[RMDB]
RNA sequence: GGGAACGACUCGAGUAGAGUCGAAAAGAAGGUAUGAACGUUGGAAGGCGCUUCCGUGUGAAGGAGUUGGCGGACGGAUGUGGCCGGCGGAAUUCUUUCAUACCAAGAACGGGAUAACCGGAAGAAAGGGUUUAAGAUACUUCGGUAUCUUAAACCCAAAAGAAACAACAACAACAAC
Reactivity to DMS in 0.01 (KOAc 150mM, MgCl2 10mM, bicine 150mM(pH8.5), 24C), signal-to-noise 4, nucleotides 027 to 126: g020a220a060g010g020u000a000u000g000a070a050c080g010u030u000g000g000a080a060g010g010c010g030c030u000u000c000c020g020u030g020u010g010a040a080g000g000a110g010u030u000g000g000c030g000g020a050c000g000g000a020u010g000u000g020g010c000c000g000g000c030g020g030a070a070u020u000c070u010u000u000c000a020u010a020c000c030a070a080g010a140a130c020g000g010g000a180u050a130a170c010c020g000g010a090a110g000a120a110a090
Reactivity to 2A3 in 0.01 (KOAc 150mM, MgCl2 10mM, bicine 150mM(pH8.5), 24C), signal-to-noise 2, nucleotides 027 to 126: g060a010a020g000g000u020a000u030g020a120a030c020g010u010u000g120g030a080a050g080g000c000g000c020u000u000c000c000g050u230g090u020g080a030a030g060g090a060g030u020u030g150g060c010g000g040a000c000g000g030a030u130g010u020g070g010c000c000g000g020c040g020g050a110a100u120u010c000u030u050u000c020a010u010a040c000c000a000a010g020a060a000c010g000g000g030a030u150a180a090c010c000g020g110a020a080g050a040a070a030
Structure probing data (DMS and 2A3) for a 177-nucleotide construct.
Source: RMDB library OK1LIB, as collected in RNAgym.
For DMS, 7,387 sequencing reads were counted.
The RNA was probed in 150 mM KOAc, 10 mM MgCl2 and 150 mM bicine (pH 8.5) at 24 C.